Structure probing data (2A3 and DMS) for a 177-nucleotide construct. For 2A3, 1,572 sequencing reads were counted. The RNA was probed in 150 mM KOAc, 10 mM MgCl2 and 150 mM bicine (pH 8.5) at 24 C. Reactivities are given for positions 27 through 126. Source: RMDB library M2PK90, as collected in RNAgym.

RNA sequence: GGGAACGACUCGAGUAGAGUCGAAAAGAAGAGAGCGUAGCACACACUCAGACUGUACGACAGUCUGACACACACCUACGCUAGUGCAUCGUGUCUGUGAUAUCGAUGUUGCACGAAGAUGAGGAAACACGCUUGUCAUCUUCGGAUGACAAGCGUGAAAAGAAACAACAACAACAAC
Reactivity to 2A3 in 0.01 (KOAc 150mM, MgCl2 10mM, bicine 150mM(pH8.5), 24C), signal-to-noise 2, nucleotides 027 to 126: g150a030a060g110a010g010a010g000c010g030u030a000g010c230a050c000a000c000a000c120u010c000a000g010a000c010u030g050u170a090c100g160a080c280a030g000u000c000u000g000a000c000a000c000a000c020a000c070c000u030a000c000g000c000u040a010g000u000g000c010a010u000c010g000u030g060u050c070u110g250u080g050a060u030a040u180c030g010a020u020g050u070u070g040c040a030c010g030a030a010g080a090u150g080a040g100g000a010a100a010
Reactivity to DMS in 0.01 (KOAc 150mM, MgCl2 10mM, bicine 150mM(pH8.5), 24C), signal-to-noise 2, nucleotides 027 to 126: g030a120a090g000a120g020a030g010c020g020u000a000g000c080a170c100a190c120a090c180u000c000a010g000a010c000u000g000u000a160c280g000a170c270a010g000u000c000u000g010a000c050a050c060a180c090a060c300c010u000a000c020g000c010u000a060g040u000g000c040a020u000c010g020u000g030u020c000u000g030u000g010a040u000a080u010c090g000a020u010g000u000u000g020c030a070c030g020a040a070g030a090u020g030a060g000g000a100a090a130